This 177-nucleotide RNA was probed chemically with 2A3 and DMS. DMS adducts were read by reverse transcription with MarathonRT. 2A3 adducts were read by reverse transcription with SuperScript II with manganese.
[RMDB]
RNA sequence: GGGAACGACUCGAGUAGAGUCGAAAACAAAAGACUCAAUUGCGGUAGCGACCAAGAUGACAGAGGCAGUCUGUUGCCUAAUUUCUGGGUAGCGUCCCAAUAGGUUGAUCGCCACCAUUCCGCCGAGGUGAUCUAGCUUGUUCGCAAGCUAGAUCACAAAAGAAACAACAACAACAAC
Reactivity to 2A3 in 0.01 (KOAc 150mM, MgCl2 10mM, bicine 150mM(pH8.5), 24C), signal-to-noise 2, nucleotides 027 to 126: c040a010a090a030a050g110a040c020u030c080a010a090u100u060g050c100g040g070u040a030g020c000g050a040c010c020a020a030g050a110u140g040a040c090a090g160a030g170g030c030a040g140u080c090u190g190u120u030g050c000c010u070a090a140u020u080u020c050u030g000g000g070u030a060g070c020g130u120c020c000c020a020a040u060a020g000g050u000u110g020a040u030c000g020c030c010a050c020c000a060u040u020c010c050g000c000c020g070a050g090
Reactivity to DMS in 0.01 (KOAc 150mM, MgCl2 10mM, bicine 150mM(pH8.5), 24C), signal-to-noise 1, nucleotides 027 to 126: c130a040a070a080a180g000a130c030u030c050a080a060u000u000g020c090g000g000u000a070g030c030g000a020c010c010a040a030g000a090u000g010a050c100a060g020a060g020g010c070a090g040u000c110u000g000u000u000g020c000c040u000a040a080u000u000u020c070u030g000g020g030u000a100g020c130g000u000c030c020c010a020a120u000a050g000g000u000u000g000a030u020c040g000c000c000a030c050c070a130u000u000c050c040g000c050c160g000a070g000
Background: The reactions ran in a buffer of 150 mM KOAc, 10 mM MgCl2 and 150 mM bicine (pH 8.5), at 24 C.